[RMDB]
RNA sequence: GGGAACGACUCGAGUAGAGUCGAAAAGCAUUGGGAAAGUUAAUCAAAAGUGCAUCAAAACUUUCCCUAAACGAAUUCAAAAUCGUUAUGAUGCACUUUUGACAUCGAUUAAGAUGAAUAGACACAAUCUAUACGAGGGAUUCGUCCCUCGUAUAGAAAAAGAAACAACAACAACAAC
Reactivity to 2A3 in 0.01 (KOAc 150mM, MgCl2 10mM, bicine 150mM(pH8.5), 24C), signal-to-noise 2, nucleotides 027 to 126: g040c030a080u120u180g020g000g090a020a100a090g060u060u130a080a080u030c010a000a000a000a000g000u000g010c010a000u000c030a020a030a100a150c020u040u030u000c000c000c000u010a000a000a000c010g000a010a030u190u140c070a160a040a030a200u060c000g020u000u070a040u150g000a000u010g030c000a010c000u010u000u000u000g010a000c000a020u000c010g140a120u210u290a120a100g010a000u030g010a000a100u050a100g080a000c020a010c000a130a070
Reactivity to DMS in 0.01 (KOAc 150mM, MgCl2 10mM, bicine 150mM(pH8.5), 24C), signal-to-noise 3, nucleotides 027 to 126: g000c160a060u000u020g000g000g010a080a090a160g000u000u020a060a150u000c010a000a020a010a000g020u000g000c000a010u000c000a080a090a060a120c110u000u000u000c010c000c000u000a010a020a010c000g000a020a060u000u000c300a080a080a140a090u000c000g010u010u000a220u010g000a010u000g000c010a020c010u000u000u010u000g000a060c030a010u000c000g000a130u010u010a120a060g000a000u000g010a090a080u010a100g000a210c110a060c140a050a080